An RNA of 177 nucleotides, treated with 2A3 and DMS and read out base by base. DMS adducts were read by reverse transcription with MarathonRT.

RNA sequence: GGGAACGACUCGAGUAGAGUCGAAAAGCGGCUCGCAUGAAGGUUCAACGAGAGUCCCACUGUCCCCACAUUCAGCCCCGUGAAAUUAAUGUACUGGUGCACAAUCCAGUCUCUCCCACAUGAAAGCCCAAUCAUCAUGCUUCGGCAUGAUGAUUGGAAAAGAAACAACAACAACAAC
Reactivity to 2A3 in 0.01 (KOAc 150mM, MgCl2 10mM, bicine 150mM(pH8.5), 24C), signal-to-noise 3, nucleotides 027 to 126: g100c030g010g010c000u020c030g010c080a080u090g060a070a060g130g010u040u050c040a090a070c090g030a000g000a010g120u080c020c000c000a020c030u020g020u030c020c000c000c010a050c000a050u130u110c010a000g080c000c000c000c010g040u030g080a070a060a070u190u150a070a110u120g020u050a020c020u030g020g000u030g000c050a010c100a080a050u000c010c000a010g000u030c000u030c000u000c000c020c000a070c020a050u160g110a100a080a020g020c000
Reactivity to DMS in 0.01 (KOAc 150mM, MgCl2 10mM, bicine 150mM(pH8.5), 24C), signal-to-noise 2, nucleotides 027 to 126: g030c100g030g000c000u010c010g070c050a140u030g010a160a070g030g010u000u000c060a110a080c050g000a120g060a230g000u000c020c030c010a070c070u000g010u010c000c020c000c040a130c040a150u010u000c070a050g010c000c000c000c000g040u000g040a030a050a090u030u010a090a080u000g010u000a010c050u010g000g030u000g000c110a130c300a080a080u060c000c020a010g000u000c020u000c080u000c000c000c020a030c220a060u000g000a150a080a050g000c090

Notes:
It was measured as part of the RMDB libraries RFM100 and RFMREP.